[RMDB]
RNA sequence: GGGAACGACUCGAGUAGAGUCGAAAAGAUUCGACAUUCAGAAAGACGAAUACUAUAAUACAAUGACUCCUCUUCAUACCGCCUUCCAGAAUUGCAAUAACAAUGUUGCCUCAUACCUCGUAUACAUCGGAUACGACAUCAACCUUCCGACUAAAGAAGUAAUCGACUUAUUCGUAAGUCGAUUACUAAAAGAAACAACAACAACAAC
Reactivity to DMS in 0.01 (KOAc 150mM, MgCl2 10mM, bicine 150mM(pH8.5), 24C), signal-to-noise 3, nucleotides 027 to 156: g020a190u000u000c020g040a120c050a110u000u010c090a200g010a150a100a090g020a150c050g010a070a110u000a110c060u010a110u000a060a150u000a150c040a090a070u000g010a070c060u000c040c030u000c040u010u000c050a070u010a040c030c020g010c020c030u010u000c030c070a090g010a030a060u000u000g000c030a070a100u000a050a100c110a080a120u000g010u000u000g020c020c030u020c050a110u010a060c040c030u000c040g010u010a100u010a080c100a100u000c020g030g030a100u000a070c030g000a080c070a090u000c040a080a070c060c020u000u000c000c010g000a050c080u000a040a050a130g020a070
Reactivity to 2A3 in 0.01 (KOAc 150mM, MgCl2 10mM, bicine 150mM(pH8.5), 24C), signal-to-noise 9, nucleotides 027 to 156: g020a030u020u030c020g020a030c080a100u090u110c090a150g130a110a110a020g060a040c020g050a040a040u050a130c060u090a040u110a250a090u160a100c090a080a090u130g050a060c020u010c010c000u030c010u070u020c030a020u060a100c010c010g020c010c020u050u020c030c000a020g060a110a080u070u050g010c030a030a060u060a130a040c040a050a060u130g010u050u040g040c000c000u040c020a020u050a110c000c020u020c010g010u020a030u010a070c070a040u050c020g020g000a010u010a070c040g040a030c040a060u080c020a020a060c010c020u040u030c010c010g050a060c060u120a100a050a050g080a020